[RMDB]
RNA sequence: GGGAACGACUCGAGUAGAGUCGAAAACAACUUUUGUGACUUGCUGAAACGGGACUAAUCUCCUCACCGAGGCUAAGCAAGUAAAAUACGCCUCUCAUAUCCUUACCUGAGGGUGGUAAGGAAAUAACCUGCAACGCUUCCUUCGGGAAGCGUUGAACGUGGGAUGUUAGUUCGCUAACAUCCCACGAAAAGAAACAACAACAACAAC
Reactivity to 2A3 in 0.01 (KOAc 150mM, MgCl2 10mM, bicine 150mM(pH8.5), 24C), signal-to-noise 2, nucleotides 027 to 156: c040a010a080c030u070u060u190u130g100u100g050a030c000u000u050g000c060u070g030a050a140a020c020g010g000g020a010c020u070a070a070u050c020u020c080c000u050c040a040c010c110g010a000g000g000c000u050a030a000g010c010a010a020g070u180a050a050a020a040u120a010c030g010c000c010u000c000u000c000a050u070a050u200c000c000u000u000a000c010c000u050g060a080g010g100g030u010g010g000u010a000a000g000g000a010a000a000u030a000a030c030c040u050g030c020a000a000c010g000c000u010u000c000c000u000u030c160g010g000g000a000a010g000c000g000u000u000g000a000a020